RNA sequence: GGGAACGACUCGAGUAGAGUCGAAAAGAUUAAGUGGGAGCGUCGCCCUGUCGGUGCAUCGGAUAUUAAUUAGCCAGUGCGUGGCAAUACGCAUAUUGAUGUCUACUUUGGCGUAGACUGUGCCAAUUUAAGGAUUGUUGGGCAAUCCAGCCCUAGACCUGAGUAUAUCGUUCGCGAUAUACUCAGGAAAAGAAACAACAACAACAAC
Reactivity to 2A3 in 0.01 (KOAc 150mM, MgCl2 10mM, bicine 150mM(pH8.5), 24C), signal-to-noise 3, nucleotides 027 to 156: g050a060u160u190a060a030g030u090g010g010g010a020g020c030g020u050c020g090c050c010c000u060g050u090c050g020g000u060g010c040a050u050c010g030g010a010u030a060u120u100a290a080u100u070a030g040c000c000a010g070u020g020c020g000u020g020g000c030a020a030u160a030c020g000c030a010u040a060u060u120g140a120u080g000u030c010u010a010c010u070u080u290g060g010c020g000u000a010g020a080c030u040g000u070g050c000c000a030a050u100u110u050a090a050g000g030a030u050u060g040u050u070g000g000g020c000a000a030u100c060c020a010g010c010c000c000u020a080g040a040
Reactivity to DMS in 0.01 (KOAc 150mM, MgCl2 10mM, bicine 150mM(pH8.5), 24C), signal-to-noise 2, nucleotides 027 to 156: g000a180u000u000a060a110g020u020g020g010g010a060g030c050g000u010c030g000c040c050c050u000g000u010c030g030g020u010g000c050a090u010c040g010g030a070u000a020u010u010a060a100u000u000a100g020c030c020a140g020u010g010c010g030u000g030g020c150a100a070u000a040c040g010c030a060u000a140u020u010g030a060u030g000u010c020u000a030c020u000u000u000g040g030c150g010u000a040g010a050c020u010g000u000g040c020c010a010a100u010u000u000a070a140g000g000a170u000u000g020u000u000g000g020g000c030a100a110u000c080c070a140g010c000c000c030u000a120g000a110

Overview:
Structure probing data (2A3 and DMS) for a 207-nucleotide construct. For 2A3, 1,316 sequencing reads were counted. The data come from the RNA Mapping Database (RMDB), library OK3TST.